An RNA of 177 nucleotides, treated with 2A3 and DMS and read out base by base. For DMS, 39,413 sequencing reads were counted. DMS adducts were read by reverse transcription with MarathonRT. Reactivities are given for positions 27 through 126. It was measured as part of the RMDB library OK2TRN.

RNA sequence: GGGAACGACUCGAGUAGAGUCGAAAAUAAUCGAUAUGCAUGCCGCGGCCGUAAUUAGCGCAUCGCGCGCGAUGCAUUAAUCGCGAUAUGCAUUAGCUAUAGCCGGCUAAUGCCGUAAUUAGCCGCGCUGUGAUGAAAAAUUCGUUUUUCAUCACAGAAAAGAAACAACAACAACAAC
Reactivity to 2A3 in 0.01 (KOAc 150mM, MgCl2 10mM, bicine 150mM(pH8.5), 24C), signal-to-noise 7, nucleotides 027 to 126: u130a010a080u120c030g010a030u020a010u200g020c010a010u020g020c030c010g000c010g020g000c050c040g050u070a120a090u060u070a050g020c020g000c050a030u060c040g010c010g010c040g010c010g050a000u010g000c000a000u020u050a010a010u130c010g000c000g010a020u000a020u080g000c000a000u060u030a030g010c030u080a040u120a280g090c070c030g010g000c000u010a020a010u050g030c010c000g020u010a040a070u020u040a010g020c010c010g010c030g010
Reactivity to DMS in 0.01 (KOAc 150mM, MgCl2 10mM, bicine 150mM(pH8.5), 24C), signal-to-noise 9, nucleotides 027 to 126: u010a100a100u010c080g010a110u010a030u000g010c020a020u000g010c080c010g020c010g010g020c190c120g010u010a120a040u000u000a030g020c080g010c020a020u000c030g010c090g020c300g030c000g010a010u000g010c020a020u000u000a020a020u000c020g000c020g000a060u000a020u000g000c000a010u000u000a080g010c140u000a080u010a090g010c100c050g000g000c000u000a010a010u000g010c070c180g000u010a060a080u000u000a040g010c000c000g010c120g010